[RMDB]
Chemical mapping of a 177-nucleotide RNA with 2A3 and DMS. Reactivities are given for positions 27 through 126. DMS adducts were read by reverse transcription with MarathonRT. The 2A3 profile rests on 4,440 reads.
RNA sequence: GGGAACGACUCGAGUAGAGUCGAAAAGAUGGCACGCUGGCACGUGCCCAGUGACAGAAAAAUGAAAAACGGUGUCCCAGCAAGACGCUGCUGAUCCCUGUGCUGUAUGAUGCCGUAGCCGGAGCACGAAACAUCGUCAUUUCGAUGACGAUGUUUCAAAAGAAACAACAACAACAAC
Reactivity to 2A3 in 0.01 (KOAc 150mM, MgCl2 10mM, bicine 150mM(pH8.5), 24C), signal-to-noise 5, nucleotides 027 to 126: g140a080u150g020g000c010a010c100g030c050u060g060g000c060a010c070g030u050g010c000c000c000a050g030u060g040a010c050a030g220a040a120a000a040a040u270g110a070a070a040a040a020c050g020g000u030g050u060c010c030c010a010g030c020a040a020g050a030c060g010c070u080g000c040u070g050a080u050c020c010c000u050g000u030g030c000u020g020u070a110u170g080a070u030g010c010c000g010u030a020g010c000c000g020g040a020g040c050a010c120
Reactivity to DMS in 0.01 (KOAc 150mM, MgCl2 10mM, bicine 150mM(pH8.5), 24C), signal-to-noise 3, nucleotides 027 to 126: g000a100u020g000g010c010a100c030g010c000u010g000g020c060a140c030g010u000g020c130c000c070a010g030u000g000a100c060a020g000a010a110a030a260a060u040g000a060a020a090a100a030c060g000g000u000g020u010c000c150c010a060g000c110a190a090g000a080c110g010c010u020g000c000u000g010a090u000c000c050c000u000g030u050g000c020u000g020u030a090u060g020a050u010g020c010c000g000u000a120g000c040c010g010g000a100g000c080a050c120